[RMDB]
RNA sequence: GGGAACGACUCGAGUAGAGUCGAAAACUAAGGAAGCUCCUGCACGAGACGAAAGAGCUGGGUACCAUCUACCGCACUUUUUGUGACUUUGGCAUGGAUGUCGAUGUUGCUAACCUGCCGAAUGGUAAAUGAUCCUCGUAUUCGUACGAGGAUCAUUAAAAGAAACAACAACAACAAC
Reactivity to DMS in 0.01 (KOAc 150mM, MgCl2 10mM, bicine 150mM(pH8.5), 24C), signal-to-noise 2, nucleotides 027 to 126: c040u010a100a090g000g010a090a150g000c050u000c010c030u000g010c090a110c060g020a090g010a100c020g000a080a060a090g010a050g000c050u000g010g010g010u010a020c050c020a050u000c150u000a060c050c060g030c040a070c030u000u000u010u010u000g010u000g000a100c060u000u000u000g000g010c020a050u010g010g000a080u000g010u000c040g000a070u000g000u000u000g000c020u000a070a100c010c010u000g030c030c030g010a060a050u010g010g030u000a070
Reactivity to 2A3 in 0.01 (KOAc 150mM, MgCl2 10mM, bicine 150mM(pH8.5), 24C), signal-to-noise 1, nucleotides 027 to 126: c000u020a000a070g110g000a030a040g100c020u000c040c030u040g020c030a040c030g080a060g070a020c020g030a080a030a030g040a010g000c080u080g030g000g050u020a030c020c000a030u030c020u090a050c020c000g090c020a070c010u110u070u060u170u170g070u040g100a040c000u050u050u000g050g000c050a020u220g110g080a150u090g040u020c030g050a050u090g010u080u050g010c020u030a120a000c000c010u040g000c020c000g020a200a110u150g000g000u050a000
Structure probing data (DMS and 2A3) for a 177-nucleotide construct. The 2A3 profile rests on 962 reads. 2A3 adducts were read by reverse transcription with SuperScript II with manganese. Source: RMDB library OK2TST, as collected in RNAgym. Conditions: 150 mM KOAc, 10 mM MgCl2 and 150 mM bicine (pH 8.5), 24 C.